[RMDB]
Annotation: Structure probing data (2A3 and DMS) for a 177-nucleotide construct. DMS adducts were read by reverse transcription with MarathonRT. The RNA was probed in 150 mM KOAc, 10 mM MgCl2 and 150 mM bicine (pH 8.5) at 24 C. The DMS profile rests on 1,804 reads.
RNA sequence: GGGAACGACUCGAGUAGAGUCGAAAAGUGUGCGACUGGAAGAUGGUUCAAUCCUUAUUGGCGAGAACCCGCUGAACCCUAAGACACGUCAAGUCUUCGACGAGGUGAUUGAGCCUGAACGUGCGGCACACCGAACUCACUUCGGUGAGUUCGGUGUAAAAGAAACAACAACAACAAC
Reactivity to 2A3 in 0.01 (KOAc 150mM, MgCl2 10mM, bicine 150mM(pH8.5), 24C), signal-to-noise 2, nucleotides 027 to 126: g100u060g000u000g010c060g030a090c050u070g000g070a110a010g000a050u100g010g010u010u030c050a000a040u040c000c000u000u190a120u140u250g000g000c000g000a110g050a070a020c020c000c020g010c030u060g040a120a110c010c000c000u030a020a000g020a000c030a010c060g080u090c070a030a030g000u000c000u160u090c060g110a130c050g040a070g000g030u050g010a120u000u100g050a020g020c020c000u030g020a060a010c030g080u230g110c040g150g000c020
Reactivity to DMS in 0.01 (KOAc 150mM, MgCl2 10mM, bicine 150mM(pH8.5), 24C), signal-to-noise 2, nucleotides 027 to 126: g020u050g040u000g010c010g000a030c030u000g000g020a110a100g020a060u000g000g020u000u010c040a000a090u000c000c040u000u000a270u010u010g010g000c000g000a220g050a000a080c070c020c000g000c000u000g000a060a110c120c020c040u030a180a100g030a170c130a020c110g070u010c120a110a090g030u030c110u000u030c030g000a020c020g000a080g000g030u000g020a160u090u000g000a040g020c000c000u000g020a100a030c070g000u000g000c000g000g000c020